This 207-nucleotide RNA was probed chemically with 2A3 and DMS.
Source: RMDB library M2RFPK, as collected in RNAgym.
For 2A3 the reverse transcriptase was SuperScript II with manganese.
The RNA was probed in 150 mM KOAc, 10 mM MgCl2 and 150 mM bicine (pH 8.5) at 24 C.
RNA sequence: GGGAACGACUCGAGUAGAGUCGAAAAGUCCUGCCAUGAGAACGCAACGAGAGCAUGUCGCAUCGAAUGGACUCGGGGAGUCGGCAGCUUGCCCCACGGAUGAGCGCCUAAUGCCGGCAUUCGGGAAAAUAGACUGGAUAGUUCGCUAUCCAGUCAACAUGUAGUGCUACUUCGGUAGCACUACAUGAAAAGAAACAACAACAACAAC
Reactivity to 2A3 in 0.01 (KOAc 150mM, MgCl2 10mM, bicine 150mM(pH8.5), 24C), signal-to-noise 5, nucleotides 027 to 156: g060u040c020c000u030g050c020c000a060u050g020a020g020a110a010c070g020c070a030a060c070g050a040g000a020g160c080a080u130g060u100c050g010c050a070u040c030g030a030a040u040g030g040a080c000u010c040g010g000g000g010a130g030u030c020g020g000c010a020g010c030u060u070g000c000c000c000c050a060c120g040g010a160u120g010a020g020c030g020c030c040u110a120a060u090g020c010c000g000g010c010a020u040u060c010g000g010g030a020a030a030a100u140a050g000a010c000u000g000g000a000u010a000g010u060u070c170g000c130u000a000u000c000c000a000g000u000c000a000a000
Reactivity to DMS in 0.01 (KOAc 150mM, MgCl2 10mM, bicine 150mM(pH8.5), 24C), signal-to-noise 1, nucleotides 027 to 156: g000u000c030c020u000g010c010c030a040u000g030a170g000a080a090c120g010c020a110a110c060g010a110g000a130g070c110a120u010g000u010c000g000c030a200u000c040g010a270a120u000g000g020a060c050u010c020g030g030g010g000a140g020u000c020g010g000c010a080g010c070u020u000g030c000c010c030c100a170c070g040g000a130u010g020a060g000c010g040c120c080u010a040a170u000g030c020c020g000g010c000a080u000u000c020g010g010g010a050a060a100a120u010a100g040a040c000u010g030g000a040u000a020g050u000u010c300g140c020u000a000u010c010c010a030g000u010c000a020a080